Source: RMDB library OK2TRN, as collected in RNAgym. An RNA of 177 nucleotides, treated with DMS and 2A3 and read out base by base. Reactivities are given for positions 27 through 126. The 2A3 profile rests on 1,288 reads. DMS adducts were read by reverse transcription with MarathonRT.
[RMDB]
RNA sequence: GGGAACGACUCGAGUAGAGUCGAAAAAAAAGCUAUUAAUGUUUUGAGAGGGUUCAGGAAAGAGAUUAAAAGGAUGCUGAACGUCUUGAAUAGGAGACGCAGAUCUGCAGGCAUGAUCAUUAUGCUGCAGUAAUGAGGCAUUCGUGCCUCAUUACUGAAAAGAAACAACAACAACAAC
Reactivity to DMS in 0.01 (KOAc 150mM, MgCl2 10mM, bicine 150mM(pH8.5), 24C), signal-to-noise 3, nucleotides 027 to 126: a040a020a050a040g000c030u010a160u000u000a090a070u000g010u010u010u010u000g010a130g010a070g000g010g010u000u000c050a070g010g000a030a050a080g010a060g010a100u010u000a050a040a090a100g010g010a040u000g010c010u000g010a100a110c030g010u000c000u000u010g010a060a080u000a110g000g010a030g010a010c030g010c070a030g000a050u000c030u010g000c090a050g000g000c040a010u000g010a040u000c130a070u010u010a050u000g010c030u000g010
Reactivity to 2A3 in 0.01 (KOAc 150mM, MgCl2 10mM, bicine 150mM(pH8.5), 24C), signal-to-noise 2, nucleotides 027 to 126: a000a000a000a000g080c180u190a140u220u070a140a030u060g050u080u110u120u120g070a040g000a010g050g110g000u050u050c020a010g100g000a080a060a000g020a010g000a040u000u210a040a050a030a060g040g010a010u090g080c010u020g000a150a060c010g000u020c010u040u050g100a190a070u110a180g190g000a020g000a020c000g010c060a010g010a080u000c030u040g020c000a030g000g100c020a020u020g030a020u070c040a010u080u210a020u120g040c030u030g000